[RMDB]
RNA sequence: GGGAACGACUCGAGUAGAGUCGAAAAUGAGACAAACACGCUUCACAAUGUGCGGCAAAGAAACAUUGUUUGUGCAAAGGCACUUCGCAAUGUGUGCUCAAACAUUGCUUAUUCAAACACGCUUCACAAAAGAAUCAGUGGUUCGCCACUGAUUCAAGUAUUGCCAAUGGUUCGCCAUUGGCAAUACAAAAGAAACAACAACAACAAC
Reactivity to 2A3 in 0.01 (KOAc 150mM, MgCl2 10mM, bicine 150mM(pH8.5), 24C), signal-to-noise 6, nucleotides 027 to 156: u130g010a030g040a060c080a030a150a000c060a020c040g010c010u030u030c040a020c020a020a030u040g000u000g000c000g030g050c060a060a020a100g100a010a070a010c020a010u000u020g060u030u050u100g000u030g020c030a000a130a160g210g020c020a020c010u090u070c040g000c010a000a020u010g010u000g040u070g060c060u070c120a050a040a000c000a000u000u020g000c010u070u120a130u120u160c100a040a120a030c040a000c130g120c050u130u130c090a060c040a120a090a030a060g000a000a000u000c000a010g000u000g060g030u040u060c190g040c050c000a010c000u000g000a000u000u000c000a000a000
Reactivity to DMS in 0.01 (KOAc 150mM, MgCl2 10mM, bicine 150mM(pH8.5), 24C), signal-to-noise 1, nucleotides 027 to 156: u000g070a130g020a200c090a140a070a150c050a080c090g000c000u000u000c060a060c080a070a030u000g070u000g000c140g000g020c060a120a110a130g010a040a070a040c020a040u000u040g000u000u000u000g000u000g030c060a060a080a080g070g000c000a060c030u000u000c150g000c060a100a070u030g020u000g010u000g040c020u000c040a060a120a040c040a120u010u020g010c010u000u010a080u000u020c070a050a040a110c070a050c080g010c010u000u010c040a130c140a080a220a130a160g000a050a000u010c010a010g010u000g040g010u000u020c300g030c040c010a010c040u010g000a000u000u000c010a000a110
Source information:
Structure probing data (2A3 and DMS) for a 207-nucleotide construct. The reactions ran in a buffer of 150 mM KOAc, 10 mM MgCl2 and 150 mM bicine (pH 8.5), at 24 C. For DMS the reverse transcriptase was MarathonRT. The DMS profile rests on 1,700 reads.